[RMDB]
RNA sequence: GGGAACGACUCGAGUAGAGUCGAAAAGUGUGCUAUACUAGUAAGGUUGAAUGAAUCAACCCUUGGUGCUUAGCUUCUUUCACCAAGCAUAUUACACGCGGAUAACAGCCAAAGGAGAAAAGAUGAACUGCCCGACGAUUCUUCGGAAUCGUCGGAACCUAUAUGACUACUUCGGUAGUCAUAUAGGAAAAGAAACAACAACAACAAC
Reactivity to 2A3 in 0.01 (KOAc 150mM, MgCl2 10mM, bicine 150mM(pH8.5), 24C), signal-to-noise 6, nucleotides 027 to 156: g060u050g030u030g040c040u040a030u040a290c080u100a100g090u120a090a120g020g010u030u010g030a110a170u140g060a090a130u070c000a010a000c000c000c000u010u010g000g010u010g010c070u060u060a050g030c000u070u070c020u040u090u030c020a030c000c010a010a000g000c020a030u040a050u140u150a030c020a020c030g040c030g030g030a050u060a180a060c030a030g060c050c040a060a040a030g060g030a050g030a010a080a050a030g060a050u160g040a110a060c050u070g040c030c000c000g000a000c000g000a000u000u000c000u030u040c110g050g000a000a000u000c000g000u000c000g000g000a000a000
Reactivity to DMS in 0.01 (KOAc 150mM, MgCl2 10mM, bicine 150mM(pH8.5), 24C), signal-to-noise 2, nucleotides 027 to 156: g000u000g040u000g010c050u000a080u020a070c070u000a140g020u000a110a090g000g000u000u010g000a070a180u000g020a200a190u000c040a020a020c000c010c040u010u010g000g000u000g030c100u000u000a070g020c070u010u010c020u000u000u000c020a060c010c010a060a110g030c050a080u000a050u000u010a030c040a050c020g000c060g000g010a170u000a060a070c070a070g020c100c020a000a060a100g020g020a170g020a110a060a060a090g000a150u000g000a030a090c030u000g000c080c000c000g000a040c010g040a040u000u000c020u000u000c300g000g010a020a020u000c010g030u000c010g000g010a010a030
Structure probing data (2A3 and DMS) for a 207-nucleotide construct. DMS adducts were read by reverse transcription with MarathonRT. As a SHAPE reagent, 2A3 marks flexible, mostly unpaired nucleotides at the ribose 2'-OH. The 2A3 profile rests on 4,277 reads. For DMS, 3,557 sequencing reads were counted.